Chemical mapping of a 177-nucleotide RNA with 2A3. Reactivities are given for positions 27 through 126.

[RMDB]
RNA sequence: GGGAACGACUCGAGUAGAGUCGAAAACAAGGUAACGCUGAUCGACGGGGACAAGCAAGUAUUGGUGGACUUCACCGUGGAUCGCUCGCUGUCACUGGAUCAGGCGACGACCGCCUCGAUCCGCUACGCGUGUCCAGAGUUUCGACUCUGGACACGCAAAAGAAACAACAACAACAAC
Reactivity to 2A3 in 0.01 (KOAc 150mM, MgCl2 10mM, bicine 150mM(pH8.5), 24C), signal-to-noise 2, nucleotides 027 to 126: c050a000a050g160g030u070a140a000c000g000c040u050g000a060u040c010g080a000c010g000g010g000g000a010c100a030a000g010c060a070a080g000u170a200u120u240g210g020u000g000g020a130c000u120u050c050a110c220c000g000u040g090g000a030u010c050g000c000u010c030g050c020u060g010u020c000a000c150u090g000g020a030u030c000a000g000g000c000g040a080c010g220a110c060c010g040c000c000u040c020g000a020u010c000c000g000c000u090a090c050